[RMDB]
RNA sequence: GGGAACGACUCGAGUAGAGUCGAAAAGAUGCCGCGGGUGCCAAGAUAAACGAGUAUCUCAGGCGGAUCGGCAGUGAGGGCGUAAUUGCGGGUUACAACGGCCUGUGCGGGAUGCUCGUCAAGCACACCAUUAUAUGCCCUUCGGGGCAUAUAAUGGAAAAGAAACAACAACAACAAC
Reactivity to DMS in 0.01 (KOAc 150mM, MgCl2 10mM, bicine 150mM(pH8.5), 24C), signal-to-noise 4, nucleotides 027 to 126: g000a080u010g010c020c010g030c090g000g000g000u000g020c040c040a070a110g000a130u020a060a150a050c050g010a060g030u000a030u010c010u000c030a120g010g010c010g010g000a050u010c040g010g010c070a070g010u010g000a120g030g020g010c050g020u000a100a080u010u020g000c030g020g000g010u000u000a040c100a050a150c100g010g000c030c010u000g000u000g060c260g040g010g000a030u010g010c010u000c020g010u010c080a070a110g010c070a050c140a190
Reactivity to 2A3 in 0.01 (KOAc 150mM, MgCl2 10mM, bicine 150mM(pH8.5), 24C), signal-to-noise 2, nucleotides 027 to 126: g040a000u120g020c000c030g030c100g120g050g000u100g010c030c020a080a050g030a190u200a040a210a020c010g010a030g020u010a010u020c000u000c030a050g130g030c060g000g010a060u030c020g030g000c050a010g030u050g080a100g050g120g020c050g000u050a060a030u040u110g020c040g050g000g070u040u040a090c050a190a010c070g040g010c020c000u070g010u050g080c050g000g010g000a010u010g000c020u010c010g020u020c010a010a030g040c040a000c000a000
Overview:
Structure probing data (DMS and 2A3) for a 177-nucleotide construct. The data come from the RNA Mapping Database (RMDB), library OK2TRN. For DMS the reverse transcriptase was MarathonRT. For DMS, 3,724 sequencing reads were counted.